Overview
Structure probing data (DMS and 2A3) for a 177-nucleotide construct. DMS adducts were read by reverse transcription with MarathonRT. The RNA was probed in 150 mM KOAc, 10 mM MgCl2 and 150 mM bicine (pH 8.5) at 24 C.
RNA sequence: GGGAACGACUCGAGUAGAGUCGAAAAGAUAUGGAUCCAUCUAGGCAACAGCUAUCACGUCGGAAACGACGUAUAGACAUGCCUAAUGGAUCCUAAGUCAAAACUGGCUGCGUUCGCGCAGCCAGAAGACAUAUGACAGCUUCGGCUGUCAUAUGUCAAAAGAAACAACAACAACAAC
Reactivity to DMS in 0.01 (KOAc 150mM, MgCl2 10mM, bicine 150mM(pH8.5), 24C), signal-to-noise 1, nucleotides 027 to 126: g020a040u000a020u010g010g010a000u010c010c010a000u010c300u000a030g010g020c000a130a070c250a090g000c010u000a020u000c260a010c000g000u000c000g020g010a020a010a000c000g000a010c010g000u000a000u010a000g000a020c040a300u010g030c010c010u000a030a000u020g000g000a000u000c000c000u030a010a040g000u000c010a130a080a120a180c010u010g000g010c000u000g000c000g060u010u030c270g020c040g060c010a000g000c000c020a020g020a050a090
Reactivity to 2A3 in 0.01 (KOAc 150mM, MgCl2 10mM, bicine 150mM(pH8.5), 24C), signal-to-noise 2, nucleotides 027 to 126: g010a000u000a000u030g000g010a000u000c020c000a020u040c190u130a010g030g000c130a300a020c110a300g010c040u020a000u050c190a020c100g000u010c000g000g000a010a010a000c000g010a010c000g000u000a000u000a000g000a000c050a240u300g000c010c000u020a000a010u000g000g000a000u030c000c000u000a010a000g000u000c020a030a020a150a230c000u000g000g000c000u000g010c000g020u070u110c300g010c010g000c170a000g010c000c000a000g000a000a010
About this RNA
2A3 adducts were read by reverse transcription with SuperScript II with manganese.